RNA sequence: GGGAACGACUCGAGUAGAGUCGAAAAAUAAAGCGUAAUCGCAUCCCAGUAGCAAAGAGCAGCGUAAAGGCGAAAGCCGAACUCAAGAUCGCAUCGGGCUAAGAUGCGAUCGUACCCACGCAAAAAACAUAUGGUUUCGGUUCGCCGAAACCAUAUGAAAAGAAACAACAACAACAAC
Reactivity to DMS in 0.01 (KOAc 150mM, MgCl2 10mM, bicine 150mM(pH8.5), 24C), signal-to-noise 3, nucleotides 027 to 126: a080u010a070a070a090g010c010g000u010a140a120u000c050g020c010a170u000c010c000c000a190g010u010a090g000c100a050a040a070g000a030g010c080a060g000c000g030u000a040a080a180g020g020c000g000a070a080a120g030c010c000g010a050a080c090u000c110a080a090g000a000u000c010g010c000a010u000c010g000g040g020c200u010a090a100g010a020u000g000c010g010a000u000c010g010u020a030c090c050c030a060c090g000c090a000a030a050a070a020a050
Reactivity to 2A3 in 0.01 (KOAc 150mM, MgCl2 10mM, bicine 150mM(pH8.5), 24C), signal-to-noise 1, nucleotides 027 to 126: a020u080a020a040a000g000c020g010u070a150a050u150c070g040c020a030u050c000c020c030a040g080u080a010g030c050a050a100a110g080a060g000c080a010g000c010g060u080a020a120a030g000g000c020g050a030a010a000g000c000c010g000a030a020c060u060c070a010a110g000a020u010c000g000c010a000u020c020g060g110g070c030u100a050a040g000a000u000g000c000g010a000u020c020g010u030a020c020c000c010a020c030g070c000a010a130a000a070a030a030
The data come from the RNA Mapping Database (RMDB), library M2PK90. Chemical mapping of a 177-nucleotide RNA with DMS and 2A3. The reactions ran in a buffer of 150 mM KOAc, 10 mM MgCl2 and 150 mM bicine (pH 8.5), at 24 C.